Overview
An RNA of 177 nucleotides, treated with 2A3 and DMS and read out base by base. The RNA was probed in 150 mM KOAc, 10 mM MgCl2 and 150 mM bicine (pH 8.5) at 24 C. The data come from the RNA Mapping Database (RMDB), library OK2TST. The DMS profile rests on 2,441 reads. DMS adducts were read by reverse transcription with MarathonRT.

RNA sequence: GGGAACGACUCGAGUAGAGUCGAAAACGGCCCGCCGCGUGAUCAACAGCUGAUCGUGCAGAUCGAACACAUAGCUGGAGAACGCGAGGUGCAAAGGGGUGUCGCCGGUGUGCACGGUGGCCUUGUCGUUGCGGUAAUUGUUCGCAAUUACCGCAACAAAAGAAACAACAACAACAAC
Reactivity to 2A3 in 0.01 (KOAc 150mM, MgCl2 10mM, bicine 150mM(pH8.5), 24C), signal-to-noise 3, nucleotides 027 to 126: c030g070g040c020c000c010g030c050c000g000c030g020u030g030a020u000c000a010a130c000a010g000c000u100g070a080u100c070g020u100g030c020a030g060a300u130c060g080a140a030c040a000c000a120u170a020g000c010u010g000g030a000g000a020a010c010g020c020g020a020g030g030u130g040c070a050a080a060g050g010g000g010u160g020u090c020g000c020c010g000g070u230g070u150g090c110a030c090g000g010u010g000g020c000c000u050u060g110u040c050
Reactivity to DMS in 0.01 (KOAc 150mM, MgCl2 10mM, bicine 150mM(pH8.5), 24C), signal-to-noise 3, nucleotides 027 to 126: c110g030g010c020c280c010g020c060c010g010c040g040u000g000a130u010c010a070a300c020a010g000c020u000g000a050u000c080g040u000g030c180a090g010a060u010c080g000a090a160c110a070c100a090u010a030g010c000u000g000g000a220g010a130a070c010g000c000g020a050g000g050u010g010c080a060a090a100g000g010g000g010u000g020u000c030g010c010c010g000g000u010g020u000g040c110a120c030g000g020u000g020g000c010c070u000u000g000u000c100